[RMDB]
RNA sequence: GGGAACGACUCGAGUAGAGUCGAAAAGAUAUGGAUGUCGAACUACAAGCCCUCUCUCGAGGAUCUCGGAAACGAGGGAGAGAUGGCUUGCGACAUCCUAAGUCAAAGACCCACUUCGGUGGGUCAAGUUCUGUCUGAUGUUCGCAUCAGACAGAACAAAAGAAACAACAACAACAAC
Reactivity to 2A3 in 0.01 (KOAc 150mM, MgCl2 10mM, bicine 150mM(pH8.5), 24C), signal-to-noise 3, nucleotides 027 to 126: g040a020u040a020u100g000g010a000u010g000u020c010g020a100a080c120u180a060c300a020a000g000c000c000c010u000c000u000c000u010c020g230a270g270g110a260u200c040u030c010g050g030a040a040a010c010g010a010g010g280g000a000g000a010g000a000u100g020g000c000u000u010g000c020g000a000c000a000u020c000c000u000a020a000g000u000c030a000a180a070g000a010c000c000c000a000c010u030u100c290g170g000u020g040g020g000u000c000a000a000
Reactivity to DMS in 0.01 (KOAc 150mM, MgCl2 10mM, bicine 150mM(pH8.5), 24C), signal-to-noise 2, nucleotides 027 to 126: g020a010u010a220u010g000g000a010u000g000u010c000g030a050a020c130u020a300c020a000a010g010c000c000c130u010c010u000c000u000c000g020a190g050g010a080u010c000u000c010g020g000a060a040a080c010g000a010g000g010g000a020g000a010g010a020u000g010g000c000u000u000g000c000g010a010c010a010u010c000c000u000a010a080g000u010c040a070a110a110g000a010c000c000c000a010c000u000u010c190g020g020u000g000g010g000u000c000a010a060
Source: RMDB library TTRDEL, as collected in RNAgym.
An RNA of 177 nucleotides, treated with 2A3 and DMS and read out base by base.
For DMS the reverse transcriptase was MarathonRT.
Reactivities are rounded to 0.1 and cut off at 0 and 3.
2A3 adducts were read by reverse transcription with SuperScript II with manganese.
2A3 is a SHAPE reagent: it acylates the 2'-hydroxyl of flexible nucleotides of all four kinds.